[RMDB]
RNA sequence: GGGAACGACUCGAGUAGAGUCGAAAAUGAGCUUCGGACAGGCUCUAAGAUCUGCGAUGGAGACGAGAGACGAUCCUGAGUCGCUUGGCACAUCGAGUCAGGAUCUUGCCGAUGUGGAUGAGCAGGACGUCACCUGACGAUUCGUCGUCAGGUGACGAAAAGAAACAACAACAACAAC
Reactivity to 2A3 in 0.01 (KOAc 150mM, MgCl2 10mM, bicine 150mM(pH8.5), 24C), signal-to-noise 1, nucleotides 027 to 126: u070g000a000g000c010u150u160c090g000g120a050c040a100g030g000c030u000c030u000a070a040g010a130u000c040u150g050c050g040a040u150g010g020a080g020a020c050g050a020g010a010g010a180c110g000a000u060c000c000u020g020a030g070u030c010g000c000u020u120g090g000c060a000c010a120u060c020g030a090g160u120c020a030g000g070a070u010c010u050u030g000c010c000g040a000u090g040u070g000g110a170u030g020a000g060c020a000g070g060a000
Reactivity to DMS in 0.01 (KOAc 150mM, MgCl2 10mM, bicine 150mM(pH8.5), 24C), signal-to-noise 1, nucleotides 027 to 126: u010g030a140g010c000u010u000c120g020g010a160c130a160g010g010c010u050c000u000a040a070g000a090u000c070u110g000c080g000a050u000g000g010a120g000a050c110g000a050g020a080g040a100c130g000a050u000c050c040u060g030a080g000u020c030g020c020u000u020g000g000c030a080c080a100u000c030g000a050g000u000c070a060g000g000a010u000c060u000u000g010c040c040g000a050u020g000u010g010g000a080u010g000a130g000c090a070g000g000a170